[RMDB]
RNA sequence: GGGAACGACUCGAGUAGAGUCGAAAAGCGAAGCUGCGGCGCUACGUGGAGGAGGGCAAGCUGCGGUACGUGCUCGUCGGCGGCGGCGUGCUGCCCGACCUGGGGUCCGUCGAGGUCACCGCGUGGGUCGUGAGGAACGGGGCGCCGGUCGACCCCGCGCCUCUAUUUACUUCGGUAAAUAGAGGCGAAAAGAAACAACAACAACAAC
Reactivity to 2A3 in 0.01 (KOAc 150mM, MgCl2 10mM, bicine 150mM(pH8.5), 24C), signal-to-noise 2, nucleotides 027 to 156: g090c050g030a130a010g020c060u050g030c020g010g000c050g040c060u060a040c080g070u060g020g040a080g010g010a050g000g020g070c060a110a030g020c050u250g100c010g020g000u060a070c070g020u020g060c030u030c070g080u010c050g050g010c040g000g020c000g010g000c010g040u050g030c020u060g020c000c000c030g060a080c000c010u070g000g000g020g020u020c020c010g060u110c110g080a090g010g020u040c020a030c100c010g020c060g090u120g010g040g000u020c020g030u050g020a110g010g050a040a020c030g000g010g010g000c010g030c010c030g010g040u050c020g040a150c000c000c010c000g000